An RNA of 207 nucleotides, treated with 2A3 and DMS and read out base by base. It was measured as part of the RMDB library M2RFPK. The 2A3 profile rests on 5,588 reads. For 2A3 the reverse transcriptase was SuperScript II with manganese. As a SHAPE reagent, 2A3 marks flexible, mostly unpaired nucleotides at the ribose 2'-OH.
RNA sequence: GGGAACGACUCGAGUAGAGUCGAAAAACGGAUGGUACGCCAUCCGACCAUCGGGUAGAAGCGUUCAAUCAGCACCGUGACGGUGCAGAUGGGAAAUUGCCCAUGAUACGCACCAUACGUGGUGCGAAAAAGCCAUCGGUGUUCGCACCGAUGGCAACAAAGAUUUCUUGUUCGCAAGAAAUCUUUGAAAAGAAACAACAACAACAAC
Reactivity to 2A3 in 0.01 (KOAc 150mM, MgCl2 10mM, bicine 150mM(pH8.5), 24C), signal-to-noise 3, nucleotides 027 to 156: a000c000g000g000a000u000g000g020u070a040c230g040c050c000a000u010c000c000g010a020c000c000a050u130c070g020g000g010u050a040g040a120a010g060c050g040u050u040c060a070a070u020c020a020g000c010a010c000c010g120u220g230a120c230g000g000u000g000c020a010g010a010u030g020g000g000a040a100a080u060u050g020c000c020c000a020u080g030a020u040a030c030g000c010a000c000c010a020u060a110c230g120u040g020g000u000g000c000g000a030a000a010a010a000g000c000c000a000u000c010g000g000u020g030u060u090c210g020c090a000c010c010g010a000u000g000g000c000a000a000
Reactivity to DMS in 0.01 (KOAc 150mM, MgCl2 10mM, bicine 150mM(pH8.5), 24C), signal-to-noise 2, nucleotides 027 to 156: a140c030g020g000a020u010g000g010u000a050c210g020c030c010a020u000c000c000g010a060c020c010a070u000c070g010g050g040u000a090g010a090a140g000c080g040u030u000c040a060a060u000c010a170g010c010a010c000c000g030u010g000a160c140g040g010u010g030c000a000g000a020u010g000g040g000a040a160a100u000u010g000c010c020c010a110u010g000a100u000a120c030g000c000a020c010c000a130u000a100c200g020u000g000g020u000g040c000g010a010a020a080a130a080g000c000c020a010u000c020g030g060u000g000u000u000c300g030c010a040c000c000g010a020u000g000g000c000a000a030